[RMDB]
RNA sequence: GGGAACGACUCGAGUAGAGUCGAAAAUGGGUAUAGGUGCUCAGACCUGCAUGCGAAAGGAUGGCCGCGGCUCUACGACGUACGGAAACCAUCCUCGGCGGAGUCAUGCGUACGGAAACCAUCCAGGCGGAGCAGGUACUCCAUCCGAAACGUACGCGGAUGGCUUAAAGUUCGCUUUAAGCCAUCCAAAAGAAACAACAACAACAAC
Reactivity to 2A3 in 0.01 (KOAc 150mM, MgCl2 10mM, bicine 150mM(pH8.5), 24C), signal-to-noise 2, nucleotides 027 to 156: u070g040g050g020u090a080u100a110g090g000u160g020c000u020c060a030g020a080c000c000u020g030c030a040u040g030c040g200a260a050a000g030g000a020u020g010g000c050c030g000c010g070g030c010u000c020u080a040c090g010a000c020g000u140a030c130g020g040a110a050a000c050c020a150u000c010c000u010c000g000g040c020g000g010a010g040u010c040a070u230g040c000g040u050a010c050g080g000a180a070a070c000c000a000u070c020c000a030g090g050c040g020g020a090g040c010a000g010g030u000a020c020u090c080c000a080u140c010c010g090a120a010a060c070g080u160a040c030g020c030
Reactivity to DMS in 0.01 (KOAc 150mM, MgCl2 10mM, bicine 150mM(pH8.5), 24C), signal-to-noise 1, nucleotides 027 to 156: u000g000g020g040u000a300u000a060g000g000u020g050c040u020c010a050g050a130c000c000u000g070c030a050u010g000c030g000a100a140a210g000g010a020u010g010g100c030c020g090c060g030g000c000u000c060u010a070c010g030a070c020g020u000a170c110g000g020a140a060a140c120c080a170u020c010c060u020c000g030g030c130g040g000a100g000u000c040a070u020g010c070g000u020a120c050g000g020a100a070a180c040c010a130u000c010c000a110g000g040c020g000g030a230g040c020a050g010g000u000a050c010u000c020c020a130u000c000c030g000a070a120a030c020g020u000a030c030g050c250
An RNA of 207 nucleotides, treated with 2A3 and DMS and read out base by base. 2A3 adducts were read by reverse transcription with SuperScript II with manganese. Values cover nucleotides 27 to 156. 2A3 is a SHAPE reagent: it acylates the 2'-hydroxyl of flexible nucleotides of all four kinds. The reactions ran in a buffer of 150 mM KOAc, 10 mM MgCl2 and 150 mM bicine (pH 8.5), at 24 C.